[RMDB]
RNA sequence: GGGAACGACUCGAGUAGAGUCGAAAACGCUGGGUCGCCGACAUGCUCAUACUGAAGCGCGCACGGUAUAGAGCAACAGCGUGCGACCUGUGCUGAAGCGCGCACGGCAACCGAAAGGUGCGAAACCCGUGAACAAGAUUCGUCUUGUUCACGGGAAGCACCUUGAGGAGUUCGCUCCUCAAGGUGCAAAAGAAACAACAACAACAAC
Reactivity to 2A3 in 0.01 (KOAc 150mM, MgCl2 10mM, bicine 150mM(pH8.5), 24C), signal-to-noise 6, nucleotides 027 to 156: c060g010c020u040g000g020g000u000c000g000c000c010g110a180c070a190u190g000c000u030c000a020u000a000c000u030g040a260a100g010c000g000c000g000c000a030c020g000g000u010a020u040a120g020a010g040c030a040a080c070a130g130c050g090u150g010c010g010a000c000c000u010g020u070g000c030u170g080a110a030g000c000g010c010g010c000a010c010g110g000c030a110a110c010c000g030a090a030a030g020g000u020g010c020g030a100a050a090c000c000c000g000u000g000a000a000c000a000a000g000a000u070u110c200g060u000c180u010u000g010u000u000c000a000c010g000g000g000a000a000
Reactivity to DMS in 0.01 (KOAc 150mM, MgCl2 10mM, bicine 150mM(pH8.5), 24C), signal-to-noise 2, nucleotides 027 to 156: c050g060c020u000g000g010g000u000c010g040c020c040g000a150c080a100u000g020c020u050c010a090u030a030c000u020g000a060a070g050c020g050c000g000c020a300c020g040g000u000a030u000a150g030a020g010c000a080a190c110a110g000c050g050u000g030c010g000a040c000c020u000g010u000g020c000u010g060a090a100g050c050g000c050g060c030a120c080g010g000c050a170a070c030c030g010a130a210a160g000g000u010g010c000g000a060a140a190c000c000c010g000u000g020a000a020c000a030a000g020a090u000u010c300g010u010c000u000u000g010u000u000c000a000c000g000g020g010a000a010

Structure probing data (2A3 and DMS) for a 207-nucleotide construct. Values cover nucleotides 27 to 156. High DMS reactivity at an A or C suggests that its Watson-Crick edge is free. DMS adducts were read by reverse transcription with MarathonRT. Conditions: 150 mM KOAc, 10 mM MgCl2 and 150 mM bicine (pH 8.5), 24 C. The 2A3 profile rests on 7,669 reads.